Description
This 177-nucleotide RNA was probed chemically with 2A3 and DMS. For DMS the reverse transcriptase was MarathonRT. It was measured as part of the RMDB library OK2TST. For 2A3, 3,083 sequencing reads were counted.
RNA sequence: GGGAACGACUCGAGUAGAGUCGAAAAGUUCCAUGAAAUGAUGGACAGUCUUGAUACUGGUUGGGUUGAUAAAACUUCAAAUGACGUUAAGUUCCUUUCCGAAUUACACCAGGUAUUCGAACGCGACCCAGAUACCAAAUUUCGAUUUGGUAUCUGGAAAAGAAACAACAACAACAAC
Reactivity to 2A3 in 0.01 (KOAc 150mM, MgCl2 10mM, bicine 150mM(pH8.5), 24C), signal-to-noise 1, nucleotides 027 to 126: g040u050u000c000c000a000u050g080a140a270a070u230g020a010u030g010g000a000c040a040g050u010c030u070u110g030a020u050a160c010u040g000g160u060u090g040g000g010u040u000g010a040u110a120a120a020a030c010u130u070c070a070a120a240u160g060a030c040g030u070u070a050a050g030u060u030c000c000u040u050u000c030c010g030a050a070u120u030a080c030a010c050c020a020g000g140u000a050u000u030c020g010a060a010c040g020c050g100a030c030
Reactivity to DMS in 0.01 (KOAc 150mM, MgCl2 10mM, bicine 150mM(pH8.5), 24C), signal-to-noise 4, nucleotides 027 to 126: g010u010u000c000c010a060u010g010a130a130a130u010g000a040u000g010g010a060c070a130g000u010c040u000u010g010a090u000a100c050u000g010g020u000u000g010g010g020u000u020g000a110u010a070a060a040a050c050u000u010c100a050a080a100u000g000a070c090g010u000u000a060a110g000u000u010c040c010u000u000u000c060c040g020a050a040u000u000a070c080a060c060c050a030g000g020u000a050u000u000c040g000a050a080c140g000c090g000a100c190